Description: Chemical mapping of a 177-nucleotide RNA with 2A3 and DMS. High DMS reactivity at an A or C suggests that its Watson-Crick edge is free. For 2A3 the reverse transcriptase was SuperScript II with manganese. It was measured as part of the RMDB library OK2TRN. Values are in units of 0.01, from 0 to 300, in steps of 10. The RNA was probed in 150 mM KOAc, 10 mM MgCl2 and 150 mM bicine (pH 8.5) at 24 C.
RNA sequence: GGGAACGACUCGAGUAGAGUCGAAAAUGGCCAAAAGCGUCGAGUAUUGGGCGCUUGCCAAAUACCGCGCAGCGUUGGUUGCCAAUCAGGACACCGGGAACAUCCCGGAUCCCGAGGCCGCCCAGGAACUCUCAGAUAUUUUCGAAUAUCUGAGAGUAAAAGAAACAACAACAACAAC
Reactivity to 2A3 in 0.01 (KOAc 150mM, MgCl2 10mM, bicine 150mM(pH8.5), 24C), signal-to-noise 6, nucleotides 027 to 126: u070g020g010c010c000a020a040a020a070g010c020g080u160c070g120a140g150u070a090u080u080g040g000g000c070g090c170u070u190g000c000c000a020a020a010u030a010c010c000g000c020g000c030a060g040c070g090u080u060g030g000u030u050g020c000c010a050a150u060c020a010g000g030a090c220a300c300c000g000g000g020a140a140c060a230u160c010c010c000g010g000a010u000c010c000c000g000a010g010g010c030c030g000c010c010c000a020g060g040a030
Reactivity to DMS in 0.01 (KOAc 150mM, MgCl2 10mM, bicine 150mM(pH8.5), 24C), signal-to-noise 9, nucleotides 027 to 126: u010g000g030c010c070a040a070a120a100g000c010g010u000c040g010a140g020u000a020u000u000g010g010g010c010g020c280u010u010g010c010c000a050a020a020u000a020c010c020g010c030g010c020a090g020c240g020u000u000g010g010u010u000g010c030c030a110a120u000c040a040g000g000a020c030a090c010c010g010g010g010a180a160c300a170u010c000c000c010g000g000a130u000c000c000c010g010a090g000g010c030c220g000c010c000c020a110g000g010a100